[RMDB]
RNA sequence: GGGAACGACUCGAGUAGAGUCGAAAACCCCGCACCUUCGGGUGCGGGGAACUACCGAGAAUGCGACUCGGUAUAUACGCAAUACCCUUGGAAACAAGGGAAUUCACGAACAGUUCGCUGUUCGUAACCGAACAUUUUGAUUCGUCAAAAUGUUCGGAAAAGAAACAACAACAACAAC
Reactivity to 2A3 in 0.01 (KOAc 150mM, MgCl2 10mM, bicine 150mM(pH8.5), 24C), signal-to-noise 1, nucleotides 027 to 126: c000c000c000c030g060c010a020c020c000u080u080c300g130g000g000u020g010c000g010g010g000g020a000a020c010u020a010c000c000g000a000g070a140a170u240g090c090g140a070c020u000c000g000g000u000a070u010a010u010a010c040g040c060a080a060u160a300c010c000c000u000u000g040g000a020a050a000c000a000a000g040g000g050a030a070u030u020c060a020c020g000a010a000c020a010g020u050u050c140g070c090u000g020u020u000c000g000u030a010a010
Reactivity to DMS in 0.01 (KOAc 150mM, MgCl2 10mM, bicine 150mM(pH8.5), 24C), signal-to-noise 1, nucleotides 027 to 126: c050c000c000c020g030c020a010c000c000u000u020c190g010g040g050u000g000c000g020g030g000g030a000a020c130u000a060c000c000g000a000g010a210a090u020g000c210g000a110c000u010c000g000g000u000a020u010a060u000a020c160g020c210a040a080u010a140c000c000c020u050u000g030g000a140a080a230c010a000a000g030g000g000a040a000u010u010c130a100c000g030a020a010c010a000g000u000u000c200g020c010u000g030u000u000c020g050u000a060a130